[RMDB]
RNA sequence: GGGAACGACUCGAGUAGAGUCGAAAAAUGAGAUCCCAUCUUGCACACUGUGCUAAUUUGAGAUUCUCAUGCCUCAUACUUGGAGAGAUCUGGACUAGAAGUCAGGGCAUCUGACUCUGCCAGCCACAAAACGUACAAGGCUUCGGCCUUGUACGAAGACUAGUAACCGGUUCGCCGGUUACUAGUCAAAAGAAACAACAACAACAAC
Reactivity to DMS in 0.01 (KOAc 150mM, MgCl2 10mM, bicine 150mM(pH8.5), 24C), signal-to-noise 2, nucleotides 027 to 156: a020u010g010a050g010a040u000c000c000c000a000u000c090u000u000g040c000a050c000a280c120u000g030u000g020c000u010a020a010u000u000u000g000a020g000a040u010u000c040u000c010a020u000g000c080c010u000c140a160u000a130c130u000u020g000g000a130g000a070g020a150u000c000u010g010g010a060c060u000a100g020a160a130g010u000c030a010g030g010g000c150a100u030c010u000g000a030c000u000c020u010g000c000c020a040g030c060c030a070c110a060a040a130a300c010g020u000a020c000a010a010g000g020c000u000u000c300g060g030c000c000u000u000g000u000a000c010g020a000a040
Reactivity to 2A3 in 0.01 (KOAc 150mM, MgCl2 10mM, bicine 150mM(pH8.5), 24C), signal-to-noise 4, nucleotides 027 to 156: a000u020g000a000g000a010u000c000c000c010a000u020c020u000u020g000c020a030c060a120c190u300g000u010g010c040u080a040a080u010u020u030g000a030g010a050u300u060c000u000c020a010u050g030c010c020u080c040a130u110a160c070u080u140g060g040a070g020a030g040a150u050c010u010g010g040a060c020u080a170g020a130a010g130u000c000a000g050g060g150c080a110u130c040u000g010a010c000u000c000u000g000c000c010a030g060c040c010a110c030a020a100a060a010c010g000u000a000c000a010a010g000g000c000u060u090c140g100g030c000c000u010u000g000u000a000c000g000a000a000
This 207-nucleotide RNA was probed chemically with DMS and 2A3. It was measured as part of the RMDB library M2RFPK. Reactivities are rounded to 0.1 and cut off at 0 and 3. The RNA was probed in 150 mM KOAc, 10 mM MgCl2 and 150 mM bicine (pH 8.5) at 24 C.